[RMDB]
RNA sequence: GGGAACGACUCGAGUAGAGUCGAAAACAUAACCACUCCGGAACCAUAUCCCAUGAUCACGUAAUCUGAAACCCAGAUAGGUAAAGGAGCACCUGUGAUCGGAUGCUUAGCAUAGGCUCCUAUAAAAGGAUGCAUUAUUAUUCGUAAUAAUGCAUCCAAAAGAAACAACAACAACAAC
Reactivity to 2A3 in 0.01 (KOAc 150mM, MgCl2 10mM, bicine 150mM(pH8.5), 24C), signal-to-noise 6, nucleotides 027 to 126: c020a040u140a060a080c020c000a040c050u030c030c040g040g030a060a050c030c000a040u030a050u130c030c010c000a050u110g010a010u010c010a000c070g140u160a050a020u010c010u010g070a120a070a080c040c030c000a000g010a030u020a010g010g010u030a160a140a020g000g000a000g000c000a010c000c010u040g000u000g000a000u000c000g000g010a010u030g000c060u190u240a040g010c010a010u020a070g130g000c000u000c000c010u040a070u060a050a040a000a010
Reactivity to DMS in 0.01 (KOAc 150mM, MgCl2 10mM, bicine 150mM(pH8.5), 24C), signal-to-noise 7, nucleotides 027 to 126: c100a080u010a100a130c060c020a080c050u000c040c040g020g000a080a110c050c040a070u000a110u000c030c020c020a120u010g000a010u000c010a020c000g010u000a070a020u000c010u000g010a080a190a150c270c190c010a030g010a010u000a030g000g020u010a070a080a030g010g000a020g020c000a120c010c010u000g010u000g000a010u000c010g010g000a030u000g010c020u000u010a090g010c020a020u000a050g030g020c000u000c010c000u000a120u020a070a050a090a110
Chemical mapping of a 177-nucleotide RNA with 2A3 and DMS. For DMS, 8,141 sequencing reads were counted. The RNA was probed in 150 mM KOAc, 10 mM MgCl2 and 150 mM bicine (pH 8.5) at 24 C. The data come from the RNA Mapping Database (RMDB), library OK2TST. For DMS the reverse transcriptase was MarathonRT. Reactivities are given for positions 27 through 126.